The record gives the reactivity of an RNA of 207 nucleotides to 2A3. 2A3 adducts were read by reverse transcription with SuperScript II with manganese. The reactions ran in a buffer of 150 mM KOAc, 10 mM MgCl2 and 150 mM bicine (pH 8.5), at 24 C. The data come from the RNA Mapping Database (RMDB), library OK3TST.
[RMDB]
RNA sequence: GGGAACGACUCGAGUAGAGUCGAAAACAAUAAAGAGAUAAGGGCUUUACCCUCUUUAUCUUUGGCUUUAUCGCUAUUGACGUUGAAGAUAUCGCAAAGCAAGCCAAGCGCACCGGGUAGCCCAUGUGCUAGUGCUUGCACCAGCGUAUCGUGAACACUUAACGCCCUUAUUCGUAAGGGCGUUAAGAAAAGAAACAACAACAACAAC
Reactivity to 2A3 in 0.01 (KOAc 150mM, MgCl2 10mM, bicine 150mM(pH8.5), 24C), signal-to-noise 2, nucleotides 027 to 156: c030a000a060u240a240a150a010g080a010g010a000u060a030a100g000g020g050c060u190u080u240a120c000c000c030u080c010u010u050u000a010u000c010u090u020u090g050g000c030u040u180u220a110u200c090g010c020u060a150u090u230g110a100c130g000u000u020g020a080a040g010a000u020a030u140c060g000c000a070a040a010g000c000a000a000g000c000c020a030a020g080c030g010c040a050c120c200g000g020g070u230a110g130c020c010c000a000u030g000u000g000c020u020a040g020u040g200c010u020u020g040c050a110c000c070a010g000c020g000u000a010u010c000g010u020g030a110a000c060a010